[RMDB]
RNA sequence: GGGAACGACUCGAGUAGAGUCGAAAACGUGCGUAGUUGUGGAGACACAAUGAGCGCGGUGAUCGCUGUGCCUAGGUGUUAUCCCUAGGGUGUUAGGCAGUGGAUCUCUGACAGCCUGAAGGGAUGACCGGGUUUCGAGCUUCGGCUUGAGGCCCGGAAAAGAAACAACAACAACAAC
Reactivity to DMS in 0.01 (KOAc 150mM, MgCl2 10mM, bicine 150mM(pH8.5), 24C), signal-to-noise 9, nucleotides 027 to 126: c030g010u010g000c020g010u040a170g000u000u010g020u000g000g000a200g000a230c010a000c010a020a010u010g000a210g010c000g010c000g000g010u010g000a060u010c040g010c020u000g010u010g000c010c010u000a050g000g000u010g010u020u020a060u010c080c000c000u000a130g000g000g010u010g010u010u010a070g000g000c050a070g010u010g010g010a060u010c030u010c010u010g000a050c090a070g010c010c000u010g010a150a100g000g000g000a040u010g000a190
Reactivity to 2A3 in 0.01 (KOAc 150mM, MgCl2 10mM, bicine 150mM(pH8.5), 24C), signal-to-noise 9, nucleotides 027 to 126: c010g010u030g000c010g080u140a020g000u030u010g000u000g010g030a070g030a030c010a000c000a010a040u090g020a040g030c000g000c010g010g030u060g040a090u060c030g000c040u030g020u070g110c000c010u020a030g030g020u070g060u210u160a060u070c000c000c000u010a010g010g010g010u030g050u040u080a070g050g000c050a030g020u110g160g100a100u050c050u000c010u060g030a030c010a060g180c010c000u070g050a120a100g020g000g000a020u030g030a030